[RMDB]
RNA sequence: GGGAACGACUCGAGUAGAGUCGAAAAGAUAUGGAGAUUUCCGUUAGAACGAUGAAAUCUCUUCGGAAACGAAGAGAUGGAGUUCGACGGAGAAUCUCCUAAGUCAAAAGGGAAACUUCGGUUUCCCGUAUAUCAUGGGGUUCGCCCCAUGAUAUACAAAAGAAACAACAACAACAAC
Reactivity to DMS in 0.01 (KOAc 150mM, MgCl2 10mM, bicine 150mM(pH8.5), 24C), signal-to-noise 6, nucleotides 027 to 126: g000a050u010a300u000g010g010a010g010a030u000u000u000c000c000g020u000u000a110g050a010a000c000g000a150u020g000a100a110a010u000c000u000c000u000u000c000g000g000a130a120a230c000g010a020a010g000a010g000a010u000g010g010a060g010u000u000c000g000a010c000g000g000a030g000a020a030u000c000u000c000c000u000a010a060g000u010c050a070a080a160a190g000g010g000a010a010a010c000u000u010c250g030g000u000u000u000c000c000c010
Reactivity to 2A3 in 0.01 (KOAc 150mM, MgCl2 10mM, bicine 150mM(pH8.5), 24C), signal-to-noise 5, nucleotides 027 to 126: g020a020u100a030u230g000g000a010g000a010u000u020u020c010c000g010u020u060a250g020a030a000c040g240a300u050g020a000a040a000u000c000u000c000u000u010c010g000g000a080a070a050c010g000a010a000g020a020g000a000u000g010g000a020g010u000u010c010g010a000c000g000g020a070g070a010a010u000c000u000c000c000u020a110a000g060u030c040a030a040a110a210g000g010g030a020a000a000c030u090u170c300g200g000u010u000u000c000c000c000
Conditions: 150 mM KOAc, 10 mM MgCl2 and 150 mM bicine (pH 8.5), 24 C. Structure probing data (DMS and 2A3) for a 177-nucleotide construct. 2A3 adducts were read by reverse transcription with SuperScript II with manganese. Source: RMDB library TTRDES, as collected in RNAgym. For DMS the reverse transcriptase was MarathonRT. For 2A3, 13,804 sequencing reads were counted.